[RMDB]
RNA sequence: GGGAACGACUCGAGUAGAGUCGAAAAGACGUGGAGGUUACGCGCCCUCCUUUGCGCGUAAGUACGUCGAAAUUCGGUGCUUAGGAUCGCACCGUUAGAUCCAUUUGAUAUCCGCUUCGUGCCGCGGUUGGGCAUUUACACUUACCCGAAAGGGGAAAAUCCAUCAGCGUUUCGACGCUGAUGGAUUAAAAGAAACAACAACAACAAC
Reactivity to 2A3 in 0.01 (KOAc 150mM, MgCl2 10mM, bicine 150mM(pH8.5), 24C), signal-to-noise 2, nucleotides 027 to 156: g000a000c050g000u120g030g150a060g050g070u030u010a010c000g000c000g030c040c000c010u160c000c040u060u090u090g000c000g000c000g000u000a000a010g100u060a020c010g000u000c000g000a120a000a000u140u070c010g000g000u000g030c010u090u130a120g000g120a150u080c060g010c000a000c000c000g000u010u010a000g000a060u000c040c020a030u130u100u110g080a060u010a100u060c040c060g070c000u020u090c100g060u060g010c020c000g000c020g030g000u080u070g030g020g020c010a000u010u040u150a010c000a000c040u190u120a040c000c000c000g040a090a010a030g020g000g000g010a000a100
Reactivity to DMS in 0.01 (KOAc 150mM, MgCl2 10mM, bicine 150mM(pH8.5), 24C), signal-to-noise 1, nucleotides 027 to 156: g010a040c030g040u000g030g020a180g010g010u000u000a000c020g020c010g010c010c140c060u000c160c100u010u020u000g020c020g010c000g040u010a000a050g000u000a010c040g000u010c010g010a050a080a210u000u000c010g060g040u000g000c030u000u010a220g000g020a150u000c130g010c000a040c010c020g010u000u000a020g000a100u000c000c010a200u000u000u000g040a150u000a140u000c070c000g010c030u010u000c030g020u000g050c000c040g010c050g030g000u000u000g000g020g020c080a090u010u020u000a160c060a060c080u000u000a100c010c010c010g000a100a090a240g060g000g000g000a070a050